This 177-nucleotide RNA was probed chemically with DMS and 2A3.
For 2A3 the reverse transcriptase was SuperScript II with manganese.
The 2A3 profile rests on 1,848 reads.
For DMS, 5,381 sequencing reads were counted.
Values cover nucleotides 27 to 126.
It was measured as part of the RMDB library M2PK90.
As a SHAPE reagent, 2A3 marks flexible, mostly unpaired nucleotides at the ribose 2'-OH.
RNA sequence: GGGAACGACUCGAGUAGAGUCGAAAAAUUGAUAAACGGCACCUAUAAGGUGGUGCCGAACCAGCGUGACCUACCUACACGCAACGAGCAGUCUGGUAUGACUGCAAACCUAUGGUAAACAAGAUAAUCCCUUAUGUAGAUUCGUCUACAUAAGGGAAAAAGAAACAACAACAACAAC
Reactivity to DMS in 0.01 (KOAc 150mM, MgCl2 10mM, bicine 150mM(pH8.5), 24C), signal-to-noise 5, nucleotides 027 to 126: a090u000u000g010a120u010a070a120a120c020g000g000c010a000c000c000u000a170u000a120a090g010g010u010g010g010u000g010c000c010g020a020a030c090c080a120g000c000g010u000g000a070c020c030u000a020c010c000u000a080c000a010c010g010c020a150a090c210g010a120g030c010a010g000u000c000u010g020g020u000a090u010g010a000c000u000g010c000a020a040a060c060c050u000a020u010g000g010u000a010a120a120c250a050a090g000a100u030a090a180
Reactivity to 2A3 in 0.01 (KOAc 150mM, MgCl2 10mM, bicine 150mM(pH8.5), 24C), signal-to-noise 2, nucleotides 027 to 126: a010u050u100g020a030u150a100a120a040c000g020g000c020a000c010c050u140a080u070a280a120g270g040u090g020g000u000g060c000c000g000a000a000c010c000a000g020c010g000u020g010a050c000c000u030a010c020c020u010a040c020a010c010g030c070a020a010c050g020a040g000c010a000g000u000c000u100g110g140u300a160u230g000a010c000u000g000c010a010a010a010c050c010u070a050u100g010g030u000a000a080a020c050a080a040g000a280u100a100a070